[RMDB]
RNA sequence: GGGAACGACUCGAGUAGAGUCGAAAAGAUAUGGAUCCGUUGCACAUCCAACUUCUUUUGACGAUCGAGGUGUCGGAAACGACACGUAGAUCGAUAAGAAGUUGGAUGUGCACCGGAUCCUAAGUCACCAUAUGCUAGUCUUCGGACUAGCAUAUGGAAAAGAAACAACAACAACAAC
Reactivity to DMS in 0.01 (KOAc 150mM, MgCl2 10mM, bicine 150mM(pH8.5), 24C), signal-to-noise 2, nucleotides 027 to 126: g000a070u000a300u010g000g000a000u000c000c000g040u010u000g000c010a010c000a010u000c000c000a010a010c000u000u000c000u000u000u010u000g020a260c130g000a020u000c000g000a300g000g000u000g010u040c010g000g010a140a140a300c020g010a030c010a000c010g020u000a300g010a030u000c000g030a090u020a010a030g010a040a010g010u000u000g000g010a000u000g000u010g010c000a000c040c000g000g010a010u000c000c000u010a000a080g010u000c040a300

Record summary
The record gives the reactivity of an RNA of 177 nucleotides to DMS. For DMS, 1,941 sequencing reads were counted. Conditions: 150 mM KOAc, 10 mM MgCl2 and 150 mM bicine (pH 8.5), 24 C. It was measured as part of the RMDB library TTRINS. For DMS the reverse transcriptase was MarathonRT.